[RMDB]
RNA sequence: GGGAACGACUCGAGUAGAGUCGAAAACAUACUUACCUUGGAUUAACUAACUUAAUUCUCACAACACCUUUAUAAUGAGGUUAGCACUGUGAAUAGCACCAUUUUGAAGAUUAAGGAAACUGAGGCAUGAUAUCACAGAUAGGUAAGUGGCCUCCAACGUAAAUAGGCGAUUCGUCGCCUAUUUACGAAAAGAAACAACAACAACAAC
Reactivity to 2A3 in 0.01 (KOAc 150mM, MgCl2 10mM, bicine 150mM(pH8.5), 24C), signal-to-noise 4, nucleotides 027 to 156: c030a030u140a020c000u020u000a000c000c000u020u060g040g030a040u100u040a050a020c120u030a030a040c020u050u040a010a040u130u000c050u010c090a050c040a080a120c010a060c050c020u130u100u050a210u170a200a170u300g010a010g020g000u010u030a020g000c030a010c070u010g000u010g050a070a050u040a070g030c030a060c060c040a080u070u070u050u120g090a040a050g020a080u100u130a050a040g090g000a070a030a020c090u060g040a060g030g010c030a010u080g040a040u090a000u090c020a010c000a060g070a080u080a010g000g010u010a020a010g000u020g060g010c000c010u010c030c000a090a070
Reactivity to DMS in 0.01 (KOAc 150mM, MgCl2 10mM, bicine 150mM(pH8.5), 24C), signal-to-noise 2, nucleotides 027 to 156: c060a140u010a110c010u000u010a010c010c020u020u010g010g030a180u000u000a050a110c070u000a080a090c120u000u000a020a030u000u000c000u000c070a100c080a120a100c110a010c000c020u010u020u000a110u000a160a130u000g020a050g020g010u010u000a100g000c030a210c040u010g000u000g010a030a140u000a050g020c020a050c020c020a240u000u000u000u000g000a120a110g000a190u010u010a060a050g010g000a080a010a170c090u010g010a060g000g010c010a110u020g000a080u000a020u010c030a090c080a050g010a140u010a070g000g050u000a010a050g000u000g010g030c000c020u000c010c020a060a210